Conditions: 150 mM KOAc, 10 mM MgCl2 and 150 mM bicine (pH 8.5), 24 C.
Chemical mapping of a 177-nucleotide RNA with DMS and 2A3.
2A3 adducts were read by reverse transcription with SuperScript II with manganese.
The 2A3 profile rests on 7,096 reads.
RNA sequence: GGGAACGACUCGAGUAGAGUCGAAAAGAUAUGGACAGGAACUACAGGGUCGUUUCGUUGAAAUCGGAAACGAUGGAGAAAUCAACCUGCCUGUCCUAAGUCAAAGUGUACACUUCGGUGUACACAACUCACUCUAAAUCUUCGGAUUUAGAGUGAGAAAAGAAACAACAACAACAAC
Reactivity to DMS in 0.01 (KOAc 150mM, MgCl2 10mM, bicine 150mM(pH8.5), 24C), signal-to-noise 4, nucleotides 027 to 126: g010a020u010a300u000g010g000a000c000a010g000g010a110a030c050u020a300c040a030g000g000g030u010c300g010u000u000u000c000g000u010u010g000a110a160a030u000c010g010g000a130a030a120c000g000a030u010g050g000a070g010a020a010a010u000c060a300a290c020c000u000g000c000c000u010g000u010c000c000u000a010a080g010u000c010a070a080a170g010u000g000u000a000c000a000c000u000u020c200g030g010u000g000u000a000c000a000c000a060a090
Reactivity to 2A3 in 0.01 (KOAc 150mM, MgCl2 10mM, bicine 150mM(pH8.5), 24C), signal-to-noise 3, nucleotides 027 to 126: g020a010u070a040u140g010g000a000c010a010g010g010a100a050c090u200a070c300a010g030g000g040u110c020g020u020u000u000c010g000u020u080g010a050a040a020u030c030g020g010a060a030a040c020g010a010u030g070g000a070g020a020a030a000u100c060a090a030c010c010u010g000c000c000u000g000u000c000c010u000a080a000g030u000c040a040a070a140g000u010g000u020a010c010a010c010u050u100c300g090g000u000g000u000a010c000a000c000a000a000